[RMDB]
Source information
This 177-nucleotide RNA was probed chemically with 2A3 and DMS. For 2A3 the reverse transcriptase was SuperScript II with manganese. Source: RMDB libraries RFM100 and RFMREP, as collected in RNAgym.

RNA sequence: GGGAACGACUCGAGUAGAGUCGAAAACACUGCGGUUGCGCAGCCUGCCGAAGAGCGUGCGGCUUCUACUGCGGCUGCGCAAGCUCGACGCGCGCACUCUUGUCUGCUUACGAGGGCUCCUCCCUUCAUAGACCAAUAGAUUCGUCUAUUGGUCUAUAAAAGAAACAACAACAACAAC
Reactivity to 2A3 in 0.01 (KOAc 150mM, MgCl2 10mM, bicine 150mM(pH8.5), 24C), signal-to-noise 9, nucleotides 027 to 126: c080a010c050u120g010c020g060g050u060u040g000c010g000c000a000g000c000c010u130g000c010c030g050a090a030g010a010g030c060g050u270g070c090g150g000c030u130u060c030u100a140c030u060g020c010g010g000c010u000g000c010g000c000a000a000g000c010u030c030g050a050c020g010c000g000c000g000c020a020c030u040c010u040u070g040u060c030u050g040c020u060u070a050c050g040a050g020g030g000c000u010c000c010u030c010c000c000u040u050c020
Reactivity to DMS in 0.01 (KOAc 150mM, MgCl2 10mM, bicine 150mM(pH8.5), 24C), signal-to-noise 9, nucleotides 027 to 126: c070a100c100u010g010c060g000g010u000u000g000c000g010c000a010g010c000c010u020g070c010c180g000a130a070g010a030g000c020g010u020g020c180g010g010c010u010u020c020u000a110c090u010g010c030g000g000c000u000g000c000g000c010a010a010g010c040u000c060g010a090c060g010c060g000c060g010c040a060c040u000c030u000u010g010u000c030u010g010c040u000u010a080c090g000a110g010g000g010c030u000c030c030u000c010c010c010u010u010c110